The record gives the reactivity of an RNA of 177 nucleotides to DMS and 2A3. Values cover nucleotides 27 to 126. Reactivities are rounded to 0.1 and cut off at 0 and 3. The DMS profile rests on 12,069 reads.
[RMDB]
RNA sequence: GGGAACGACUCGAGUAGAGUCGAAAAUCUAACUCAUUCGUGAGUUAGAGUGAGCGCAGCGAGCAUUGGGCCGGUGGCGCGCUGUCGGUGCCGCGCGUGGCGAUAGUGCUUGCUUCGGCAAGCACAAGUAGCUUGGUAUAUUCGUAUACCAAGCUACAAAAGAAACAACAACAACAAC
Reactivity to DMS in 0.01 (KOAc 150mM, MgCl2 10mM, bicine 150mM(pH8.5), 24C), signal-to-noise 5, nucleotides 027 to 126: u000c000u000a010a000c000u000c000a040u000u020c200g020u000g000a020g000u000u000a000g000a020g010u000g010a200g010c040g010c030a080g010c020g000a070g010c030a100u000u010g010g000g000c020c020g010g030u010g010g010c060g000c130g020c030u000g010u010c040g010g020u000g010c020c020g010c040g010c040g030u010g000g020c060g010a100u010a080g010u000g000c000u000u000g000c000u000u000c150g010g010c000a010a010g010c000a000c000a040a090
Reactivity to 2A3 in 0.01 (KOAc 150mM, MgCl2 10mM, bicine 150mM(pH8.5), 24C), signal-to-noise 5, nucleotides 027 to 126: u000c000u000a000a000c000u000c010a030u070u070c190g100u030g030a000g000u000u000a000g000a010g020u110g070a080g000c040g000c050a100g010c040g070a070g030c020a050u060u130g040g040g010c020c010g090g060u110g090g100c060g000c050g020c070u040g080u080c020g010g030u050g060c000c010g010c010g000c030g020u030g040g020c030g070a070u110a090g010u000g000c000u000u000g000c010u010u020c130g060g000c000a000a000g000c000a010c000a020a030